[RMDB]
Chemical mapping of a 207-nucleotide RNA with 2A3 and DMS. For DMS, 9,854 sequencing reads were counted. For 2A3, 13,713 sequencing reads were counted. For DMS the reverse transcriptase was MarathonRT. The RNA was probed in 150 mM KOAc, 10 mM MgCl2 and 150 mM bicine (pH 8.5) at 24 C.
RNA sequence: GGGAACGACUCGAGUAGAGUCGAAAAGGGGUCGUCCGUGGCCAAAGACAUGAAGGCCAUACUGAAGCCUCCACGGUAUGGCUUCAACAGCUUUGGCGUAACAUCGGACGACGGAGGCACCCAAACACCUUAUAUACGUUCGCGUAUAUAAGGUGAAACUAAUUAAUUGGUUCGCCAAUUAAUUAGUAAAAGAAACAACAACAACAAC
Reactivity to 2A3 in 0.01 (KOAc 150mM, MgCl2 10mM, bicine 150mM(pH8.5), 24C), signal-to-noise 6, nucleotides 027 to 156: g150g010g030g000u000c010g000u000c010c000g000u000g010g000c000c020a000a000a000g060a110c170a220u150g020a040a020g180g090c000c000a000u000a000c000u010g030a100a030g000c000c000u000c000c000a010c000g010g000u000a000u000g000g000c000u010u010c040a130a110c080a060g060c000u010u000u010g000g000c010g000u010a010a010c030a170u220c010g000g000a000c000g000a000c000g000g000a000g000g000c000a060c000c010c000a020a080a010c000a000c000c000u000u000a000u000a000u000a010c000g030u030u060c300g010c010g170u010a000u000a000u000a000a000g000g000u000g000a000a000
Reactivity to DMS in 0.01 (KOAc 150mM, MgCl2 10mM, bicine 150mM(pH8.5), 24C), signal-to-noise 3, nucleotides 027 to 156: g010g030g020g020u000c000g010u000c010c010g040u040g020g000c010c000a000a020a020g020a130c090a130u010g000a130a070g020g020c000c000a030u000a040c030u000g010a060a090g000c000c000u000c010c020a300c010g020g020u000a020u010g010g000c000u000u000c020a090a160c060a160g020c000u000u000u010g010g040c020g000u000a050a080c080a110u010c000g000g000a020c010g040a000c000g000g040a030g060g040c010a140c020c000c010a130a130a250c010a010c000c000u000u000a010u000a010u000a020c010g000u000u010c300g030c020g040u000a000u000a010u000a000a010g010g010u000g000a010a070